[RMDB]
RNA sequence: GGGAACGACUCGAGUAGAGUCGAAAAGAUUAUGUGGGAGAGGCGCCCUUUCGUUUCAUCGGAUAAUUAAUUGCCAGUCGCUGGCUUUAGCGAUUUUGAUGUCAUCUGUAGCGAUGACUAUGCUACCUUAAGGUAUGAUCCGGAUACCUCCGGUAAACAGCUAGGUAUGAUUCGUCAUACCUAGCUGAAAAGAAACAACAACAACAAC
Reactivity to DMS in 0.01 (KOAc 150mM, MgCl2 10mM, bicine 150mM(pH8.5), 24C), signal-to-noise 2, nucleotides 027 to 156: g000a140u000u010a060u000g030u000g000g020g030a090g000a110g000g000c030g020c090c030c020u000u010u000c070g020u010u000u000c040a120u000c040g000g000a120u010a060a130u020u000a080a150u000u000g010c000c050a090g000u000c040g010c020u000g010g030c090u010u000u000a040g020c070g010a090u000u000u010u010g060a180u000g000u000c010a030u000c020u010g020u010a220g050c130g000a020u000g010a020c060u000a030u020g000c030u000a030c030c050u010u010a060a040g030g040u000a050u000g010a090u000c010c070g020g000a100u000a080c040c030u000c020c140g010g000u010a020a080a170
Reactivity to 2A3 in 0.01 (KOAc 150mM, MgCl2 10mM, bicine 150mM(pH8.5), 24C), signal-to-noise 3, nucleotides 027 to 156: g050a020u120u160a050u200g050u110g020g040g010a070g010a020g020g000c010g020c020c010c000u010u050u060c070g020u040u070u060c040a080u060c020g030g000a020u030a130a050u250u130a030a080u170u200g010c000c010a030g040u050c000g020c060u010g090g010c140u210u070u140a010g000c000g000a010u060u010u110u200g080a040u120g000u000c000a000u000c030u060g260u230a020g050c040g040a000u000g000a000c010u010a050u120g050c000u020a030c000c020u050u160a110a020g010g000u010a020u120g030a030u030c020c000g000g000a000u040a050c010c030u010c020c050g000g000u020a060a110a030